RNA sequence: GGGAACGACUCGAGUAGAGUCGAAAACGGACUUGAGCAGCGCCUUGUUCACCGCCUGCUUGUCCGCCAGGCCGAUGCCUUCGGCAGGCAGCGAAAGCAGUGCGGAGCCGCCGCCGGAGAGAAGGAACGGUCAUAGUACGUUCGCGUACUAUGACCGAAAAGAAACAACAACAACAAC
Reactivity to 2A3 in 0.01 (KOAc 150mM, MgCl2 10mM, bicine 150mM(pH8.5), 24C), signal-to-noise 2, nucleotides 027 to 126: c050g010g050a020c030u070u180g020a000g030c000a000g040c000g070c100c020u130u130g140u180u090c070a050c090c050g050c000c010u010g010c000u040u040g150u030c000c010g000c020c010a100g000g050c040c000g060a060u270g150c040c020u030u030c010g030g000c020a060g010g000c020a020g020c030g130a120a000a040g000c040a030g150u020g230c010g010g010a030g000c000c010g030c020c000g000c010c010g020g010a040g010a010g000a060a040g110g030a050a070
Reactivity to DMS in 0.01 (KOAc 150mM, MgCl2 10mM, bicine 150mM(pH8.5), 24C), signal-to-noise 2, nucleotides 027 to 126: c080g020g000a100c070u010u010g000a090g020c060a060g000c080g020c160c050u010u020g020u000u000c150a140c050c010g000c020c000u010g000c000u000u010g010u000c020c030g020c000c020a120g010g020c020c030g020a060u020g020c170c140u000u000c010g010g000c000a060g020g000c000a080g030c110g010a100a060a070g000c000a020g000u010g030c020g000g000a090g000c070c050g060c030c050g010c040c000g030g000a100g010a090g010a040a090g000g010a080a240